[RMDB]
RNA sequence: GGGAACGACUCGAGUAGAGUCGAAAAGAUAUGGACAGGUGUAGACAUGUCGGUUGUCGGAAACGACAACUCGACAACAGCUACCCUGUCCUAAGUCAAAAUCUGACAUUCUUCGGAAUGUCAGAAAGUAGACACAUAAGUUCGCUUAUGUGUCUACAAAAGAAACAACAACAACAAC
Reactivity to 2A3 in 0.01 (KOAc 150mM, MgCl2 10mM, bicine 150mM(pH8.5), 24C), signal-to-noise 2, nucleotides 027 to 126: g010a010u010a000u050g000g000a000c010a000g010g010u120g040u090a010g020a060c210a300u300g010u020c000g010g000u000u000g000u000c000g000g000a040a000a000c000g030a000c000a020a000c060u080c110g010a000c020a070a030c070a020g000c000u000a000c010c000c000u000g000u000c000c000u000a000a000g000u000c000a000a010a010a300u030c000u000g000a000c000a010u010u000c000u020u020c060g160g010a000a000u010g000u000c000a000g000a000a000a000
Reactivity to DMS in 0.01 (KOAc 150mM, MgCl2 10mM, bicine 150mM(pH8.5), 24C), signal-to-noise 5, nucleotides 027 to 126: g000a010u000a050u020g000g000a010c000a000g000g000u010g010u000a010g010a060c120a110u030g020u000c010g010g010u000u000g000u000c000g010g000a030a010a030c000g010a000c010a010a000c000u010c020g020a010c000a100a090c270a130g000c000u000a010c000c000c000u000g010u000c000c000u000a000a060g000u000c010a140a090a140a140u000c000u000g000a010c000a010u000u000c000u000u010c270g010g000a020a010u000g000u000c000a000g010a010a030a110